[RMDB]
RNA sequence: GGGAACGACUCGAGUAGAGUCGAAAAGAUAUGGAUCUUGCGUCGCGACGAAGUUAUCGCUUCGGAAACGAAGCGAGUAACAGAGCGACGCAAGAUCCUAAGUCAAACACCUGCUUCGGCAGGUGAAUCGUGCAUAACCCUUCGGGGUUAUGCACGAAAAAGAAACAACAACAACAAC
Reactivity to DMS in 0.01 (KOAc 150mM, MgCl2 10mM, bicine 150mM(pH8.5), 24C), signal-to-noise 1, nucleotides 027 to 126: g020a030u000a300u030g010g000a010u000c000u030u010g000c000g010u000c000g000c000g000a240c220g070a140a180g000u000u000a000u000c000g000c000u000u000c030g000g010a140a060a250c000g000a000a010g040c010g000a040g010u000a000a000c000a090g000a220g000c000g010a000c000g010c000a000a000g040a010u000c000c000u000a000a080g010u000c030a100a130a300c020a000c000c000u000g000c000u000u020c170g030g010c010a000g020g020u000g000a030a090